[RMDB]
RNA sequence: GGGAACGACUCGAGUAGAGUCGAAAAGCGCAUGCGGCUUGCGGUGAAACGCCCCGGGAAAGCCGCGCUUUCACCGUCCCAAAUCCUGUCAUCGGACGGCAAUGGCGUCUUGGCCCUUUAUGCGAUACCGGCAUUUAGUCUUCGGACUAAAUGCCGGAAAAGAAACAACAACAACAAC
Reactivity to 2A3 in 0.01 (KOAc 150mM, MgCl2 10mM, bicine 150mM(pH8.5), 24C), signal-to-noise 2, nucleotides 027 to 126: g050c000g010c050a050u210g040c040g040g040c130u000u050g000c000g070g000u070g100a030a100a000c090g040c000c030c000c000g000g000g110a080a300a000g130c000c000g000c000g000c000u000u100u070c070a030c000c000g000u010c000c070c000a010a020a020u070c070c020u110g090u150c050a070u000c000g050g000a000c000g030g000c000a000a280u170g150g000c030g030u080c010u000u090g030g000c100c020c040u110u160u020a190u000g050c010g000a010u130a040
This 177-nucleotide RNA was probed chemically with 2A3. Source: RMDB library OK1LIB, as collected in RNAgym. Reactivities are given for positions 27 through 126. Conditions: 150 mM KOAc, 10 mM MgCl2 and 150 mM bicine (pH 8.5), 24 C. For 2A3, 581 sequencing reads were counted.